[RMDB]
RNA sequence: GGGAACGACUCGAGUAGAGUCGAAAAUCUUUGCUUCGGCAAAGAAAAAAGCGUACUACCAGAAGGACUUGGAUUUAGGUGAACUACUCAUGUCCCAAAUAGGACAUGAGCACCUUGUCAGUCCCUGGUAUCGCAAAAACCCUCCUUCGGGAGGGAACUAUGCCGAAACUUUCGAGUUUCGGCAUAGAAAAGAAACAACAACAACAAC
Reactivity to 2A3 in 0.01 (KOAc 150mM, MgCl2 10mM, bicine 150mM(pH8.5), 24C), signal-to-noise 2, nucleotides 027 to 156: u040c010u000u000u060g030c010u010u100c210g120g000c010a000a000a000g000a100a080a000a000a010a010g050c040g020u070a090c040u010a010c040c000a010g000a240a110g070g010a030c040u230u280g180g010a040u300u300u110a030g010g000u020g010a040a010c010u130a050c000u300c010a000u000g030u000c010c000c030a170a300a120u290a190g000g000a000c000a000u010g000a000g000c000a000c000c000u000u000g000u000c000a000g000u010c080c000c000u000g000g000u000a000u030c000g000c000a000a000a090a020a020c000c000c000u000c020c000u030u080c230g040g000g000a000g010g000g040a000a000